[RMDB]
RNA sequence: GGGAACGACUCGAGUAGAGUCGAAAAUGGCGGUUGCACAAACACUUCAUACUUUAUGAUCAAAUCAAUGUUCUCCGUAUUCAGGUUCAUUCUAUUUUACCAAUAUUUGUGAUAUAUUCGUUUCUCUCGUAGGUGUUUGACGUCUCUCAGUGACAUGCAAUGCAGCCAAAUUCGUUUGGCUGCAUUGAAAAGAAACAACAACAACAAC
Reactivity to DMS in 0.01 (KOAc 150mM, MgCl2 10mM, bicine 150mM(pH8.5), 24C), signal-to-noise 2, nucleotides 027 to 156: u000g030g030c000g010g000u000u000g010c030a120c030a080a080a050c060a060c020u000u010c040a100u010a100c120u000u000u000a080u030g010a070u010c020a060a070a140u000c080a070a110u000g020u000u000c000u000c010c060g030u000a110u010u000c070a080g000g030u010u000c040a060u000u000c070u000a150u010u010u010u000a080c040c020a050a080u000a090u000u000u000g020u000g000a080u010a080u000a080u000u010c050g020u000u000u000c040u000c020u000c030g020u000a080g020g030u000g000u000u000u000g000a080c060g010u000c020u000c010u000c030a070g010u010g010a080c060a110u010g010
Reactivity to 2A3 in 0.01 (KOAc 150mM, MgCl2 10mM, bicine 150mM(pH8.5), 24C), signal-to-noise 4, nucleotides 027 to 156: u110g020g000c010g010g000u030u050g040c050a040c010a030a060a010c030a020c030u100u090c060a100u060a160c050u160u220u180a150u200g110a060u060c050a020a060a100u060c070a060a070u100g040u080u000c050u020c030c070g050u070a110u020u140c060a040g020g050u030u050c020a030u110u000c030u180a200u060u100u080u140a050c030c020a050a030u020a110u070u140u130g050u030g060a010u030a010u020a070u180u110c050g020u040u050u020c030u000c000u000c020g030u040a060g010g060u060g060u090u060u080g050a060c020g020u020c010u000c000u000c020a030g020u010g110a040c040a070u200g010